The record gives the reactivity of an RNA of 177 nucleotides to DMS and 2A3. The reactions ran in a buffer of 150 mM KOAc, 10 mM MgCl2 and 150 mM bicine (pH 8.5), at 24 C. For 2A3, 3,571 sequencing reads were counted.
RNA sequence: GGGAACGACUCGAGUAGAGUCGAAAAGAUAUGGACACGCAGAUACUAUUUCAAUGAGUUUGAGCACCGGGUCGGAAACGACCUUGUGCAAUGAUGACUCAUUGAAAUAGAGUAGUGUCCUAAGUCAGGUUACAUUAUCGUUCGCGAUAAUGUAACCAAAAGAAACAACAACAACAAC
Reactivity to DMS in 0.01 (KOAc 150mM, MgCl2 10mM, bicine 150mM(pH8.5), 24C), signal-to-noise 2, nucleotides 027 to 126: g000a040u000a300u020g000g010a020c000a020c000g080c200a160g000a080u000a040c000u000a000u000u000u000c030a010a020u010g000a040g010u000u010u000g020a180g050c010a000c000c070g000g000g000u000c010g010g020a080a100a280c000g010a000c000c000u000u010g000u000g030c000a190a080u010g010a110u010g000a000c010u000c010a000u000u000g000a000a020a000u000a000g000a010g020u010a040g030u000g000u010c000c000u000a030a080g000u010c060a120
Reactivity to 2A3 in 0.01 (KOAc 150mM, MgCl2 10mM, bicine 150mM(pH8.5), 24C), signal-to-noise 1, nucleotides 027 to 126: g030a030u080a030u210g040g000a010c050a000c030g070c300a000g030a110u130a100c020u000a020u030u050u000c000a020a010u010g010a000g050u030u060u100g060a000g010c000a000c010c050g020g030g000u000c000g000g000a050a100a040c010g010a010c020c000u000u000g000u010g030c010a000a070u080g030a020u050g010a000c000u040c000a000u000u000g000a010a000a000u000a000g000a010g000u080a080g000u000g000u000c000c000u010a030a000g060u020c070a020